[RMDB]
RNA sequence: GGGAACGACUCGAGUAGAGUCGAAAACUUUUCUUGAUUUGAGGACAUCAUGUUUUAGUGUCGCUGCACUUACAACUGGUUUGACUUUUCAAACUGUGCGGCCUGGCAAUUUUAACCAAGACUUCUAGUAGAUAACCGUUCGCGGUUAUCAAAAGAAACAACAACAACAAC
Reactivity to 2A3 in 0.01 (KOAc 150mM, MgCl2 10mM, bicine 150mM(pH8.5), 24C), signal-to-noise 8, nucleotides 027 to 129: c020u070u070u090u040c040u050u100g130a160u090u060u170g070a060g020g050a030c010a090u080c020a060u100g100u030u030u030u100a050g010u020g010u000c010g000c020u020g020c010a020c020u130u160a070c080a210a060c090u070g030g060u010u000u030g070a080c080u080u120u080u050c020a010a010a000c030u020g020u030g030c000g000g000c000c040u030g000g000c000a030a050u030u040u050u100a060a030c030c050a060a040g060a070c030u020u000c020u040a070g040u010a020
Reactivity to DMS in 0.01 (KOAc 150mM, MgCl2 10mM, bicine 150mM(pH8.5), 24C), signal-to-noise 4, nucleotides 027 to 129: c050u000u000u000u000c020u000u000g020a090u040u020u060g020a160g000g070a050c050a040u040c060a050u000g050u040u000u020u060a080g050u050g000u000c050g090c070u000g000c020a020c030u040u090a080c250a200a090c180u050g020g020u030u020u010g030a120c250u110u010u000u000c020a000a000a000c040u020g040u030g030c000g010g040c120c150u000g030g000c040a080a060u000u000u000u000a020a110c030c040a100a060g000a000c150u020u020c050u030a050g020u030a000